[RMDB]
RNA sequence: GGGAACGACUCGAGUAGAGUCGAAAACGCCGCAACCAGCUGCACGAGCUCCGGUUCUACGACAUUGACCGCGUGGUCAAGACGGACGGCAAUAUGGCCAUCAUGCGAGGGCUCGCCAACUUCUUUCAGGGCCUGGGCGCCGUCGGGCAGGCGGUGGACAAGACGGCAGAUUCGUCUGCCGUCUUGUAAAAGAAACAACAACAACAAC
Reactivity to 2A3 in 0.01 (KOAc 150mM, MgCl2 10mM, bicine 150mM(pH8.5), 24C), signal-to-noise 1, nucleotides 027 to 156: c050g010c000c000g010c040a120a130c010c070a050g050c080u110g000c080a000c020g000a030g020c000u000c000c050g000g020u000u060c020u040a050c010g150a040c110a220u010u030g000a020c000c040g150c180g290u300g010g070u000c000a010a110g000a010c030g000g000a010c000g000g000c020a000a130u300a220u270g080g000c080c010a080u110c020a020u200g210c090g070a160g070g000g000c010u000c020g000c000c000a020a020c070u220u070c000u050u300u180c160a050g020g000g000c020c000u030g010g010g010c010g000c070c000g110u000c020g020g030g000c020a030g110g000c000g000g000u030g000g020
An RNA of 207 nucleotides, treated with 2A3 and read out base by base.
It was measured as part of the RMDB library OK3TST.